[RMDB]
RNA sequence: GGGAACGACUCGAGUAGAGUCGAAAAUAACGUACUUUCGAGUACGUUAAGUCUCCCGGCGCUAGCAGGGCUGAAGAGAAGAUGCAGGAGCUGGUGGUGGAAUUAGGGGGGGAUUCGUCCCCCCCAAUGUUACGUGCUGUUUCGACAGCACGUAACAAAAAGAAACAACAACAACAAC
Reactivity to DMS in 0.01 (KOAc 150mM, MgCl2 10mM, bicine 150mM(pH8.5), 24C), signal-to-noise 1, nucleotides 027 to 126: u000a000a020c010g010u000a000c000u000u000u000c130g010a010g010u000a000c000g000u000u000a000a060g010u000c160u000c010c000c010g010g020c090g010c100u010a040g040c080a100g020g020g000c060u010g000a060a100g000a110g010a130a080g000a090u000g020c050a050g000g000a090g040c070u010g000g000u010g000g000u000g000g020a130a080u000u010a160g010g030g020g000g020g010g010a010u000u020c130g000u000c000c000c000c000c000c000c000a000a010
Structure probing data (DMS) for a 177-nucleotide construct. The DMS profile rests on 1,197 reads. The reactions ran in a buffer of 150 mM KOAc, 10 mM MgCl2 and 150 mM bicine (pH 8.5), at 24 C. It was measured as part of the RMDB library M2PK50.